Chemical mapping of a 207-nucleotide RNA with 2A3. The RNA was probed in 150 mM KOAc, 10 mM MgCl2 and 150 mM bicine (pH 8.5) at 24 C.
[RMDB]
RNA sequence: GGGAACGACUCGAGUAGAGUCGAAAAACAACUGUGCAUGCAUGUAAAAUCGAUAAGCCAGAGGCAAAAGUCAUAAACUUUUUCUUCUGGAAUAUCGGGGUAGUUAAAUUUAUGUAGAGCAUUCAGGAAAACAUCGGAAUUGCUAUUGGCAAGCUCAGAUGAUAACAUCCUUCGGGAUGUUAUCAUCAAAAGAAACAACAACAACAAC
Reactivity to 2A3 in 0.01 (KOAc 150mM, MgCl2 10mM, bicine 150mM(pH8.5), 24C), signal-to-noise 3, nucleotides 027 to 156: a000c090a020a000c010u080g000u050g000c010a000u030g000c000a030u000g010u190a050a060a020a090u090c000g000a000u020a050a030g020c000c000a000g000a000g020g000c030a010a010a010a000g010u030c040a260u170a280a280a100c010u010u040u000u010u020c000u010u020c010u000g020g010a000a010u010a000u000c000g000g000g030g050u050a090g070u050u260a120a070a090u120u180u110a020u060g030u030a020g040a040g060c000a020u090u270c060a060g070g060a020a080a000a020c030a040u140c070g050g050a060a050u040u020g010c040u100a110u240u140g100g000c030a030a000g000c020u010c080a010